An RNA of 177 nucleotides, treated with DMS and 2A3 and read out base by base. DMS adducts were read by reverse transcription with MarathonRT. The RNA was probed in 150 mM KOAc, 10 mM MgCl2 and 150 mM bicine (pH 8.5) at 24 C. For 2A3 the reverse transcriptase was SuperScript II with manganese. Source: RMDB libraries RFM100 and RFMREP, as collected in RNAgym.
RNA sequence: GGGAACGACUCGAGUAGAGUCGAAAAGGGUGGAGAUGUAGAAGAUGUGACGCCGCGGCCCGGCGGGUGCCAGAUUAGCGGACGGUGCCCGCGGUUGCAACGGGAUCCCGGGCGCUGCAGCUUGGGACAAAUCGUUUAUAUUCGUAUAAACGAUUUGAAAAGAAACAACAACAACAAC
Reactivity to DMS in 0.01 (KOAc 150mM, MgCl2 10mM, bicine 150mM(pH8.5), 24C), signal-to-noise 9, nucleotides 027 to 126: g000g000g010u010g000g000a080g000a080u010g000u010a100g010a060a060g000a100u000g010u000g000a090c060g010c020c030g010c190g010g000c010c020c030g000g020c010g000g000g020u000g010c010c010a140g010a220u020u030a100g020c180g010g010a140c100g010g020u000g000c010c000c000g010c010g000g010u020u020g010c120a070a210c040g000g000g000a160u010c090c030c010g000g000g010c010g010c080u010g000c060a070g010c010u000u000g000g000g010a190
Reactivity to 2A3 in 0.01 (KOAc 150mM, MgCl2 10mM, bicine 150mM(pH8.5), 24C), signal-to-noise 9, nucleotides 027 to 126: g050g020g030u150g040g020a110g010a080u100g040u160a060g030a160a010g020a040u040g020u020g040a020c010g010c030c000g090c010g020g020c000c000c000g030g010c000g000g010g010u010g010c000c010a060g030a250u160u210a090g110c110g070g050a050c060g000g010u010g000c000c000c000g000c000g000g020u080u170g030c030a050a030c020g000g000g020a020u070c030c030c010g000g010g000c020g010c040u080g010c010a010g000c000u030u030g010g000g010a000